The record gives the reactivity of an RNA of 177 nucleotides to 2A3 and DMS. The RNA was probed in 150 mM KOAc, 10 mM MgCl2 and 150 mM bicine (pH 8.5) at 24 C. Reactivities are given for positions 27 through 126. For DMS the reverse transcriptase was MarathonRT. Reactivities are rounded to 0.1 and cut off at 0 and 3.
RNA sequence: GGGAACGACUCGAGUAGAGUCGAAAAGAUAUGGAUCGAUCUAGAACUACAGAACUAUUCGGAAACGAAUAGCUCUGCUAGAGUCGAUCCUAAGUCAAAGUACUUGAUAGUUCGCUAUCAAGUACAAGACUAGUUUCAGGUUCGCCUGAAACUAGUCAAAAGAAACAACAACAACAAC
Reactivity to 2A3 in 0.01 (KOAc 150mM, MgCl2 10mM, bicine 150mM(pH8.5), 24C), signal-to-noise 3, nucleotides 027 to 126: g000a020u050a020u130g000g010a000u010c010g010a000u020c010u020a010g010a190a300c270u300a080c270a010g020a020a010c000u000a000u000u010c000g000g000a030a050a040c010g000a020a010u010a010g030c000u030c000u060g030c010u010a010g010a040g200u040c000g000a000u000c000c010u000a010a010g030u000c050a240a010a050g020u000a000c010u030u000g010a010u010a000g020u040u130c300g020c200u010a000u010c000a000a000g000u000a000c000a000a010
Reactivity to DMS in 0.01 (KOAc 150mM, MgCl2 10mM, bicine 150mM(pH8.5), 24C), signal-to-noise 2, nucleotides 027 to 126: g020a050u000a210u010g000g000a010u010c000g000a070u000c000u000a000g000a200a160c230u020a300c010a000g000a010a040c000u000a010u000u000c000g000g000a070a070a090c000g020a020a020u000a010g030c000u000c000u010g050c000u000a000g000a050g000u000c000g020a010u000c010c010u000a020a080g000u000c010a110a140a150g020u000a000c000u000u010g000a000u000a010g000u000u040c300g030c000u000a020u000c000a010a000g000u000a000c020a060a070